This 207-nucleotide RNA was probed chemically with 2A3.

[RMDB]
RNA sequence: GGGAACGACUCGAGUAGAGUCGAAAACAUGAACUAUGUAUUGAUUUUGUAGCACCAUCCCAUGGGAGUAACUUGAUCAUGAUAGAGUUAUUUGCAAAGUGACUGGAAGCAUUCCUCAUUUCUUCUCAGAAUUCAACAAGAACCACAACCAGUUUAAGUUUGACAGGCUGUUCGCAGCCUGUCAAACAAAAGAAACAACAACAACAAC
Reactivity to 2A3 in 0.01 (KOAc 150mM, MgCl2 10mM, bicine 150mM(pH8.5), 24C), signal-to-noise 1, nucleotides 027 to 156: c040a070u120g040a030a030c020u120a060u100g030u050a100u120u130g090a090u020u200u170u140g100u010a060g070c080a030c010c010a030u100c040c010c000a000u070g000g000g050a150g010u060a120a000c000u030u040g050a030u070c020a030u040g140a100u100a030g060a010g090u110u020a090u090u070u050g060c050a140a090a120g070u020g020a040c020u000g040g010a070a000g020c050a000u010u150c000c000u030c000a060u030u100u040c010u050u000c060u000c030a040g080a110a090u110u010c010a030a050c000a210a060g030a020a000c030c080a010c060a160a020c020c060a010g080u080u110u150a040a020
Conditions: 150 mM KOAc, 10 mM MgCl2 and 150 mM bicine (pH 8.5), 24 C.